The record gives the reactivity of an RNA of 177 nucleotides to DMS and 2A3. The 2A3 profile rests on 8,725 reads. The reactions ran in a buffer of 150 mM KOAc, 10 mM MgCl2 and 150 mM bicine (pH 8.5), at 24 C.

RNA sequence: GGGAACGACUCGAGUAGAGUCGAAAACGGGUGUUUCCACAGCCUCUACACAUGUGGGCAUGUCCACAGCGCAUGUGCAUUAGCUGUGGGAUCCCUCUAAACCCCCCGUGGGUUCGCCCACGGGGGGCGUUAAGAUGAAGUUCGCUUCAUCUUAACGAAAAGAAACAACAACAACAAC
Reactivity to DMS in 0.01 (KOAc 150mM, MgCl2 10mM, bicine 150mM(pH8.5), 24C), signal-to-noise 3, nucleotides 027 to 126: c190g010g000g010u000g000u000u000u000c000c000a020c010a020g000c000c020u010c030u010a020c010a020c000a000u000g010u010g000g010g020c070a080u010g010u000c080c060a100c160a170g010c060g010c020a010u000g010u000g000c010a030u000u010a090g010c000u000g020u000g000g000g010a010u000c020c000c000u000c080u000a040a090a280c010c000c000c000c010c000g010u000g000g000g010u010u010c170g000c000c000c000a000c000g000g010g020g020g000g000
Reactivity to 2A3 in 0.01 (KOAc 150mM, MgCl2 10mM, bicine 150mM(pH8.5), 24C), signal-to-noise 5, nucleotides 027 to 126: c040g020g000g030u090g050u050u020u020c000c010a000c000a000g000c000c020u040c030u070a020c010a010c000a010u010g010u040g070g170g000c080a180u230g110u120c080c050a100c070a110g100c040g000c020a010u020g010u010g020c010a020u080u160a020g000c000u000g000u000g010g000g000a000u020c000c030c000u030c020u050a220a300a190c000c000c000c020c000c000g000u000g020g020g000u030u050c170g040c020c010c000a000c000g000g000g010g000g010g000